[RMDB]
RNA sequence: GGGAACGACUCGAGUAGAGUCGAAAAGGGAUAUGGACGAUUGUUAUGGUCCGCUUUACUAAGACAGCUCCUUCGGAAACGAAGGAGUCGAGUAAAGAACUACGGAACGUCAAUCGUCCUAAGUCAACAGAUCAUAGCUCUUCGGAGCUAUGAUCUGAAAAGAAACAACAACAACAAC
Reactivity to DMS in 0.01 (KOAc 150mM, MgCl2 10mM, bicine 150mM(pH8.5), 24C), signal-to-noise 1, nucleotides 027 to 126: g020g000g000a010u000a210u030g000g040a020c020g000a010u000u000g000u000u000a030u010g000g020u000c000c000g020c000u000u000u000a030c010u010a280a190g010a150c300a150g000c000u000c030c000u030u030c000g010g000a100a020a100c030g010a030a000g000g010a030g030u000c010g000a030g050u000a000a010a000g000a150a050c060u010a300c060g000g000a020a020c020g000u010c020a030a030u000c040g060u000c080c030u000a030a050g000u000c030a140a270
Source: RMDB library TTRDES, as collected in RNAgym.
An RNA of 177 nucleotides, treated with DMS and read out base by base.
For DMS, 672 sequencing reads were counted.
DMS adducts were read by reverse transcription with MarathonRT.